RNA sequence: GGGAACGACUCGAGUAGAGUCGAAAAGCACGUCCGGUAAGUCCCGUGCGAACACUUGAGCUCCGGCUUGGCCGCUCUUGUGGAUUAGGACGUUCUAGCUCCGGCUUGGCCGCUAGUUCGUCCGAAACACUCAGGCAUCGUUCGCGAUGCCUGAGUGAAAAGAAACAACAACAACAAC
Reactivity to DMS in 0.01 (KOAc 150mM, MgCl2 10mM, bicine 150mM(pH8.5), 24C), signal-to-noise 1, nucleotides 027 to 126: g000c010a100c090g000u010c160c040g040g000u070a070a090g080u020c000c010c000g040u000g010c020g000a180a130c010a050c060u000u010g040a000g070c000u010c110c060g000g000c050u000u030g030g070c070c170g000c000u000c020u000u000g040u010g000g010a160u070u030a030g030g000a020c000g000u000u000c010u000a040g020c030u040c120c080g000g010c080u020u070g030g000c050c090g000c030u000a000g000u000u010c010g000u000c000c020g000a000a020a100
Reactivity to 2A3 in 0.01 (KOAc 150mM, MgCl2 10mM, bicine 150mM(pH8.5), 24C), signal-to-noise 3, nucleotides 027 to 126: g020c000a010c020g010u030c040c020g010g000u150a100a110g080u150c000c030c000g020u010g000c020g020a090a000c040a000c070u070u040g000a000g000c030u050c020c050g070g000c070u130u170g130g000c030c030g000c000u010c000u020u040g010u070g000g020a030u000u170a040g010g000a000c020g000u000u040c000u000a040g000c060u070c070c000g120g050c120u090u190g080g040c070c020g000c000u000a000g010u050u000c000g030u000c010c010g010a010a010a000